This 170-nucleotide RNA was probed chemically with DMS and 2A3. For DMS, 18,173 sequencing reads were counted. For 2A3 the reverse transcriptase was SuperScript II with manganese. Values are in units of 0.01, from 0 to 300, in steps of 10. The 2A3 profile rests on 15,287 reads. The reactions ran in a buffer of 150 mM KOAc, 10 mM MgCl2 and 150 mM bicine (pH 8.5), at 24 C. The data come from the RNA Mapping Database (RMDB), library 15KLIB.

[RMDB]
RNA sequence: GGGAACGACUCGAGUAGAGUCGAAAACCUACGGAAAUCCCUGAGUUCCUCGGAUGUCCAGGCCGUCCCCUCUUCUAGAGAAGGGAGACUCCGGAACUUCUUCCAUGAUUGGGACGAAGCCGCCACCUAGCAUCGCUCUUCGGAGCGAUGAAAAGAAACAACAACAACAAC
Reactivity to DMS in 0.01 (KOAc 150mM, MgCl2 10mM, bicine 150mM(pH8.5), 24C), signal-to-noise 5, nucleotides 027 to 129: c040c020u010a090c110g030g030a010a050a050u000c010c000c010u040g020a120g050u000u000c040c040u040c100g040g010a100u020g000u000c000c020a120g030g040c130c060g050u000c000c010c040c060u000c020u010u010c070u060a110g040a020g030a020a000g040g020g000a050g010a160c050u000c070c040g000g000a000a130c080u000u000c030u030u050c040c030a070u040g030a180u070u050g000g000g000a040c040g020a080a070g040c010c000g050c040c060a110c030c040u050a090g020
Reactivity to 2A3 in 0.01 (KOAc 150mM, MgCl2 10mM, bicine 150mM(pH8.5), 24C), signal-to-noise 7, nucleotides 027 to 129: c000c000u010a020c040g020g030a040a020a070u040c010c010c000u060g030a050g060u040u030c010c020u030c020g040g000a080u050g040u030c040c030a040g030g000c010c000g080u020c000c000c000c000u020c010u050u030c040u090a070g030a020g030a100a070g020g030g010a030g030a010c030u010c030c020g060g030a080a060c000u050u020c000u050u000c020c020a090u180g040a160u190u220g040g000g000a010c050g020a030a010g010c010c000g030c010c000a040c020c000u010a030g040